[RMDB]
RNA sequence: GGGAACGACUCGAGUAGAGUCGAAAAGUGCCUCUGGUUUGGUUGCCAAAGAUCUUGCCUAUAAGUUACUAAAGAUAGGCAUCGUCGCCAUCUCAGAGACAGAUAUGCACGUGCAAUUGGCGGCAGACAUUACCUCCCAGUUCGCUGGGAGGUAAUGAAAAGAAACAACAACAACAAC
Reactivity to DMS in 0.01 (KOAc 150mM, MgCl2 10mM, bicine 150mM(pH8.5), 24C), signal-to-noise 6, nucleotides 027 to 126: g010u000g010c010c000u000c020u000g010g000u010u000u000g020g030u010u010g010c120c100a060a070a110g010a020u000c080u000u010g010c010c010u000a010u000a070a090g010u000u000a150c280u020a090a090a110g000a040u000a000g000g000c010a020u010c160g010u000c030g010c010c020a020u000c020u000c020a030g000a060g010a070c070a020g010a120u000a070u000g010c070a050c110g010u000g010c070a080a140u000u000g000g000c020g000g000c030a090g010a200
Reactivity to 2A3 in 0.01 (KOAc 150mM, MgCl2 10mM, bicine 150mM(pH8.5), 24C), signal-to-noise 5, nucleotides 027 to 126: g040u020g020c010c000u000c020u030g000g060u010u030u040g050g010u050u180g040c030c020a040a080a000g020a020u030c010u040u030g000c010c010u010a020u020a030a120g160u200u230a160c090u210a200a070a050g130a030u010a010g000g000c010a010u020c020g020u010c010g000c010c000a020u000c000u000c010a030g000a010g020a060c040a020g130a050u130a050u150g020c040a050c170g030u060g010c050a110a200u080u050g000g010c020g000g000c010a010g010a030